RNA sequence: GGGAACGACUCGAGUAGAGUCGAAAAGAUAUGGAUCCCAAGAACGAUAAGAUCCUCGGAAACGAGUGAUCUUUUGACGUUCGACGGAUCCUAAGUCAAAAGAUGAGAGGCUUCGGCCUCUCAUCAACAAAUAGAAUAUGUUCGCAUAUUCUAUUUGAAAAGAAACAACAACAACAAC
Reactivity to 2A3 in 0.01 (KOAc 150mM, MgCl2 10mM, bicine 150mM(pH8.5), 24C), signal-to-noise 4, nucleotides 027 to 126: g020a000u040a020u110g010g000a000u010c010c000c000a000a020g000a000a000c040g040a070u030a120a000g000a010u010c000c010u010c010g000g020a050a030a020c010g010a000g050u150g010a000u010c000u000u010u010u030g030a010c010g010u010u000c000g000a010c000g000g000a010u000c010c000u000a050a010g040u000c030a040a020a060a180g010a000u010g000a000g000a000g020g010c040u130u190c300g070g000c020c000u000c000u000c000a000u000c000a000a010
Reactivity to DMS in 0.01 (KOAc 150mM, MgCl2 10mM, bicine 150mM(pH8.5), 24C), signal-to-noise 9, nucleotides 027 to 126: g000a030u000a300u010g000g000a010u000c000c000c010a060a300g000a000a010c000g020a150u000a010a010g010a010u000c000c000u000c000g000g000a080a090a160c000g010a010g010u010g010a000u000c000u000u000u000u000g010a160c070g010u000u000c000g010a300c300g000g000a000u000c000c000u000a000a080g000u000c030a100a090a100a110g000a010u000g000a000g000a010g010g010c000u000u010c230g030g010c000c000u000c000u000c000a000u000c000a050a090
Structure probing data (2A3 and DMS) for a 177-nucleotide construct. DMS adducts were read by reverse transcription with MarathonRT. The data come from the RNA Mapping Database (RMDB), library TTRDEL. Conditions: 150 mM KOAc, 10 mM MgCl2 and 150 mM bicine (pH 8.5), 24 C. 2A3 adducts were read by reverse transcription with SuperScript II with manganese. The DMS profile rests on 22,555 reads.